[RMDB]
RNA sequence: GGGAACGACUCGAGUAGAGUCGAAAAACGAUAACGAGGCGCUCGCUAUUGCUGCGUAACUGACGGCCUGACGGUCUGACGUUACAAAGCUAAAGCGCGGUUGGACGCCACCGGGCAACAGAAGGGGAAAGGCGACCCCGUUUCGACGGGGUCGCAACCAUUAGUAGUGAUUCGUCACUACUAAUGGAAAAGAAACAACAACAACAAC
Reactivity to 2A3 in 0.01 (KOAc 150mM, MgCl2 10mM, bicine 150mM(pH8.5), 24C), signal-to-noise 3, nucleotides 027 to 156: a000c050g030a070u150a100a000c050g010a060g060g000c030g010c050u070c040g040c050u080a130u170u220g000c010u010g000c010g000u000a010a000c000u030g020a010c030g010g020c030c010u160g090a080c150g010g000u010c010u000g020a010c020g010u000u010a000c000a000a010a000g010c000u010a030a020a000g030c030g010c020g010g000u040u070g040g020a020c030g010c010c000a010c020c010g020g020g010c030a120a040c030a120g080a090a020g020g000g000g040a050a110a030g080g000c000g000a010c010c000c000c020g020u040u060u080c140g030a020c000g000g040g000g000u000c000g000c000a000a000
Reactivity to DMS in 0.01 (KOAc 150mM, MgCl2 10mM, bicine 150mM(pH8.5), 24C), signal-to-noise 2, nucleotides 027 to 156: a130c060g020a120u000a030a090c050g010a060g000g030c030g020c020u000c000g010c000u020a150u000u000g010c010u000g000c300g050u010a020a010c020u010g020a300c300g000g020c020c000u000g000a160c300g170g020u000c000u000g010a300c300g000u010u000a070c010a070a270a060g000c030u000a020a040a070g000c050g000c050g000g030u000u000g000g010a080c020g010c000c010a100c080c060g000g000g020c040a110a090c010a100g000a090a060g000g010g020g000a050a050a180g020g030c010g000a070c000c040c010c050g000u000u000u000c220g000a050c000g000g000g030g030u010c020g040c000a000a020

An RNA of 207 nucleotides, treated with 2A3 and DMS and read out base by base. The RNA was probed in 150 mM KOAc, 10 mM MgCl2 and 150 mM bicine (pH 8.5) at 24 C. Source: RMDB library M2RFPK, as collected in RNAgym. The DMS profile rests on 2,729 reads.